An RNA of 207 nucleotides, treated with 2A3 and read out base by base. 2A3 adducts were read by reverse transcription with SuperScript II with manganese. It was measured as part of the RMDB library M2RFPK.
RNA sequence: GGGAACGACUCGAGUAGAGUCGAAAAAGUGGCAGGCCGUACGCGGCCGGCCACAUGCAAGAGAAGAAGCGUUCAACCAAGCCGUGACAGGCAAGUCAGGGCUUCGGCGGGAAAUUGCUCUUACCAAAAAACCUCCUUUCCUUCGGGAAAGGAGGAACCCAUCUACCUAGUUCGCUAGGUAGAUGGGAAAAGAAACAACAACAACAAC
Reactivity to 2A3 in 0.01 (KOAc 150mM, MgCl2 10mM, bicine 150mM(pH8.5), 24C), signal-to-noise 2, nucleotides 027 to 156: a010g000u000g000g040c020a030g020g000c000c030g010u030a020c190g010c000g040g000c000c000g000g000c010c000a010c000a010u060g080c050a030a110g030a050g010a110a030g050a050a010g050c030g030u030u050c020a030a010c050c000a030a000g000c000c000g170u000g000a000c010a040g130g180c040a030a050g000u000c000a040g000g050g060c010u070u080c110g000g000c080g010g090g020a020a030a100u080u210g000c000u000c000u030u070a080c030c020a010a040a000a000a080a110c000c000u000c000c000u000u010u000c000c020u000u090c110g080g000g000a010a000a020g010g000a000g000g010a010a010